[RMDB]
RNA sequence: GGGAACGACUCGAGUAGAGUCGAAAAAUGCAGUGAUCCUGCAUGCUAGUACGUCAGUACGUAUCAUGGAUCGAUAGUACGAUCACUAGACGUCUGGAUCGCUAGCUCGACAUGAUCGCACGUGCUACACUGACCCGGGAUUCGUCCCGGGUCAGUGAAAAGAAACAACAACAACAAC
Reactivity to DMS in 0.01 (KOAc 150mM, MgCl2 10mM, bicine 150mM(pH8.5), 24C), signal-to-noise 1, nucleotides 027 to 126: a040u000g010c000a040g020u000g000a040u010c030c000u000g000c000a030u020g020c030u020a010g030u000a080c090g000u020c100a050g010u000a020c040g000u010a050u000c070a070u010g000g000a090u000c040g030a090u000a090g000u020a070c010g020a010u000c030a110c050u010a120g000a110c130g010u000c080u000g000g010a060u000c030g050c010u000a010g010c160u000c040g000a180c000a010u010g010a000u000c040g010c050a090c090g030u010g010c020u000a170
Reactivity to 2A3 in 0.01 (KOAc 150mM, MgCl2 10mM, bicine 150mM(pH8.5), 24C), signal-to-noise 1, nucleotides 027 to 126: a010u050g010c000a010g010u010g060a010u030c030c000u000g020c000a010u040g010c000u000a000g000u070a030c040g030u000c090a060g030u100a060c030g050u080a040u070c080a110u100g120g060a130u020c020g020a030u050a060g090u090a040c030g000a020u000c040a090c170u090a030g070a160c040g060u000c090u000g050g000a050u000c010g000c000u010a000g040c020u030c060g070a070c030a050u040g010a000u010c010g000c010a020c060g020u070g020c010u020a040